[RMDB]
RNA sequence: GGGAACGACUCGAGUAGAGUCGAAAAGAGGUGACGACAUACGGCAGCGCCGGGCACGGUCCGGCCGCGACGUCCGACGCAGAGGUGGUUCGCCGGCUGCGCGCGGCAGGCGCUGUCAUCAUCGGCAGCAUCUACGAAUAUUCGUAUUCGUAGAUGCAAAAGAAACAACAACAACAAC
Reactivity to DMS in 0.01 (KOAc 150mM, MgCl2 10mM, bicine 150mM(pH8.5), 24C), signal-to-noise 5, nucleotides 027 to 126: g010a100g010g010u000g000a050c080g010a050c110a130u000a130c200g000g020c020a050g020c020g010c010c000g000g020g030c010a110c080g010g030u000c110c030g010g020c010c010g010c020g000a080c090g000u000c000c020g010a120c090g030c140a090g000a250g000g010u000g010g000u010u000c050g000c050c020g000g000c040u000g010c170g000c020g010c010g010g010c030a170g000g010c010g010c040u000g000u000c000a040u000c130a060u000c020g000g010c120a170
Reactivity to 2A3 in 0.01 (KOAc 150mM, MgCl2 10mM, bicine 150mM(pH8.5), 24C), signal-to-noise 3, nucleotides 027 to 126: g150a040g010g070u050g040a000c070g030a010c030a120u240a070c090g030g000c010a010g000c010g000c010c000g040g120g000c170a160c220g050g030u040c010c000g020g000c030c020g000c000g010a020c010g080u020c010c010g040a050c070g000c140a030g030a090g160g050u190g060g210u140u100c060g000c050c000g060g000c000u040g010c020g010c020g000c000g030g000c020a030g010g000c000g000c010u000g000u010c000a000u010c010a000u000c000g040g030c040a030
Structure probing data (DMS and 2A3) for a 177-nucleotide construct.
The DMS profile rests on 5,574 reads.
The reactions ran in a buffer of 150 mM KOAc, 10 mM MgCl2 and 150 mM bicine (pH 8.5), at 24 C.
Values cover nucleotides 27 to 126.
2A3 adducts were read by reverse transcription with SuperScript II with manganese.
DMS adducts were read by reverse transcription with MarathonRT.